An RNA of 177 nucleotides, treated with DMS and 2A3 and read out base by base. Values cover nucleotides 27 to 126. 2A3 is a SHAPE reagent: it acylates the 2'-hydroxyl of flexible nucleotides of all four kinds. The DMS profile rests on 4,684 reads. The RNA was probed in 150 mM KOAc, 10 mM MgCl2 and 150 mM bicine (pH 8.5) at 24 C.
RNA sequence: GGGAACGACUCGAGUAGAGUCGAAAAUUGAAAGGGGAAGGCUGCAUGGUGUGAUUAACCUACUAACCAACCCAGGGCUCGGCCAGGACGCUGUGGCACGCGACGAGAUGCCUGGCCUUCUGUCAACCAUGAUGAUGUCUUUCGAGACAUCAUCAUGAAAAGAAACAACAACAACAAC
Reactivity to DMS in 0.01 (KOAc 150mM, MgCl2 10mM, bicine 150mM(pH8.5), 24C), signal-to-noise 4, nucleotides 027 to 126: u020u000g000a050a120a100g000g000g000g000a070a210g010g010c050u000g020c080a060u000g020g010u010g010u010g000a130u010u010a070a090c030c020u010a100c090u000a090a110c050c030a050a230c030c020c010a120g000g000g000c060u010c150g000g010c020c020a040g000g000a110c050g030c070u010g030u000g020g000c040a050c190g000c030g000a080c100g000a080g000a110u010g010c000c010u000g000g010c020c010u000u010c030u000g000u010c050a090a110c210
Reactivity to 2A3 in 0.01 (KOAc 150mM, MgCl2 10mM, bicine 150mM(pH8.5), 24C), signal-to-noise 2, nucleotides 027 to 126: u070u090g050a040a000a010g000g010g010g020a000a130g050g000c030u040g040c080a060u120g010g020u040g010u050g070a100u110u060a020a010c010c000u020a040c030u020a080a030c020c020a010a030c010c000c000a020g000g020g000c070u100c130g010g000c000c010a010g020g010a020c040g010c050u050g020u100g130g000c080a030c080g040c010g060a080c030g050a040g000a150u120g070c000c030u010g010g010c000c000u020u030c010u020g020u040c030a050a040c040